This 177-nucleotide RNA was probed chemically with DMS and 2A3. Source: RMDB library OK2TST, as collected in RNAgym. Values cover nucleotides 27 to 126. Conditions: 150 mM KOAc, 10 mM MgCl2 and 150 mM bicine (pH 8.5), 24 C. DMS adducts were read by reverse transcription with MarathonRT. The DMS profile rests on 2,121 reads. DMS (dimethyl sulfate) methylates the pairing face of unpaired adenines and cytosines.
RNA sequence: GGGAACGACUCGAGUAGAGUCGAAAACAUUAGGAAAACAAAUGGAGGUGUCAGCUCUCUGCACACACCAUUUCAUGCUCACCUAGAGUGGACAAUGAACAAACUGUCAUCCAUCACGUUUGUUUGCCACUUGACAUCAGUUCGCUGAUGUCAAGUGAAAAGAAACAACAACAACAAC
Reactivity to DMS in 0.01 (KOAc 150mM, MgCl2 10mM, bicine 150mM(pH8.5), 24C), signal-to-noise 3, nucleotides 027 to 126: c060a090u000u000a030g020g020a090a070a110a080c090a040a020a010u000g000g020a220g020g010u000g010u000c000a020g030c300u000c300u000c040u000g000c180a020c050a040c030a080c020c010a020u000u000u000c140a100u010g010c080u000c110a100c010c010u000a020g010a100g020u000g000g010a070c080a040a160u000g000a020a020c040a010a010a010c030u010g010u010c050a100u000c040c110a100u020c130a040c140g010u000u000u000g000u000u000u000g020c150
Reactivity to 2A3 in 0.01 (KOAc 150mM, MgCl2 10mM, bicine 150mM(pH8.5), 24C), signal-to-noise 3, nucleotides 027 to 126: c010a040u100u130a030g080g020a070a050a040a050c040a010a060a000u050g020g010a180g160g000u000g020u060c020a020g010c060u040c040u000c020u130g020c100a020c000a000c010a000c020c000a000u000u040u000c030a040u090g000c010u030c020a050c020c020u050a050g020a040g120u050g010g040a050c030a080a200u180g020a030a020c010a020a040a040c020u030g050u050c030a070u040c040c030a050u110c030a020c110g000u010u000u010g020u020u020u060g100c040